[RMDB]
RNA sequence: GGGAACGACUCGAGUAGAGUCGAAAAGGGCAGGCAGAAAGCCUUCUGUGAAGGACCUGAAGUGUCAAUCAACAAAGUAGUCUGAAAGUCACAGGUAUAUGAAGGUAAGGACAGUUCUUAUCCCUGUCCUUGGAUUUACAACUAGCUUUUAACGUACAAUUGGGAAGGAGUUCGCUCCUUCCCAAUUAAAAGAAACAACAACAACAAC
Reactivity to DMS in 0.01 (KOAc 150mM, MgCl2 10mM, bicine 150mM(pH8.5), 24C), signal-to-noise 1, nucleotides 027 to 156: g050g010g040c030a040g010g040c000a190g010a060a140a220g000c040c000u000u000c040u000g020u020g020a140a150g000g000a060c100c030u000g030a070a150g010u000g010u010c040a050a220u000c050a090a120c040a090a080a130g000u030a090g040u010c030u020g000a070a060a110g020u020c010a020c020a060g000g050u000a100u000a120u030g010a030a070g000g000u010a020a100g030g020a110c040a070g000u000u000c050u010u000a160u000c090c090c010u010g000u000c010c010u000u000g000g000a120u010u000u000a090c030a020a080c000u000a040g000c020u000u000u000u020a020a100c130g040u000a090c180
Reactivity to 2A3 in 0.01 (KOAc 150mM, MgCl2 10mM, bicine 150mM(pH8.5), 24C), signal-to-noise 1, nucleotides 027 to 156: g020g000g050c010a010g000g010c050a030g080a020a050a000g040c020c020u010u010c040u060g130u080g180a130a140g090g020a020c010c010u080g050a160a030g030u100g010u000c000a000a070u000c020a060a170c030a100a120a000g000u070a030g100u060c070u040g060a020a000a000g000u010c010a000c010a090g000g050u030a120u030a020u090g010a060a000g060g010u070a030a000g090g000a000c050a040g070u120u090c070u060u120a120u130c040c020c000u000g000u000c000c000u000u010g000g030a040u030u160u100a030c030a130a020c000u070a040g020c010u000u150u080u100a170a030c050g150u220a040c040